Chemical mapping of a 177-nucleotide RNA with DMS and 2A3. The reactions ran in a buffer of 150 mM KOAc, 10 mM MgCl2 and 150 mM bicine (pH 8.5), at 24 C. 2A3 adducts were read by reverse transcription with SuperScript II with manganese. For DMS, 9,351 sequencing reads were counted. The data come from the RNA Mapping Database (RMDB), library OK2TST.
[RMDB]
RNA sequence: GGGAACGACUCGAGUAGAGUCGAAAAUGGUAUAAAGAUAUAAAUGACAAGUAUAAUGAUAUCUAUGAUUUUACCGCAAUAUGUAUGCUAAUAGCGUCUACAUUGAUAGUGACCAUAUACGUGUUUACAGAUUUAACAGAUUCGUCUGUUAAAUCUGAAAAGAAACAACAACAACAAC
Reactivity to DMS in 0.01 (KOAc 150mM, MgCl2 10mM, bicine 150mM(pH8.5), 24C), signal-to-noise 7, nucleotides 027 to 126: u010g010g010u010a040u000a080a110a060g000a040u010a030u000a070a080a110u010g010a090c050a060a090g010u000a040u000a070a080u000g000a050u000a020u000c000u000a110u010g000a130u010u000u000u000a040c040c030g010c110a050a050u000a030u010g000u010a020u010g010c030u000a070a100u010a130g010c050g010u000c090u010a030c070a030u010u000g000a080u010a080g020u000g000a200c080c010a130u000a040u000a030c070g000u000g000u000u000u010a150
Reactivity to 2A3 in 0.01 (KOAc 150mM, MgCl2 10mM, bicine 150mM(pH8.5), 24C), signal-to-noise 5, nucleotides 027 to 126: u060g000g030u060a080u040a110a150a000g030a020u070a010u040a130a170a120u120g010a020c020a050a100g050u030a110u040a190a120u080g030a020u010a000u030c010u030a090u100g060a090u050u120u060u070a020c030c010g010c020a020a040u070a020u130g060u030a010u050g020c020u060a140a150u060a290g020c010g020u000c020u010a020c010a050u020u060g050a040u070a070g050u020g040a020c000c020a010u050a000u010a100c070g020u040g020u050u050u040a020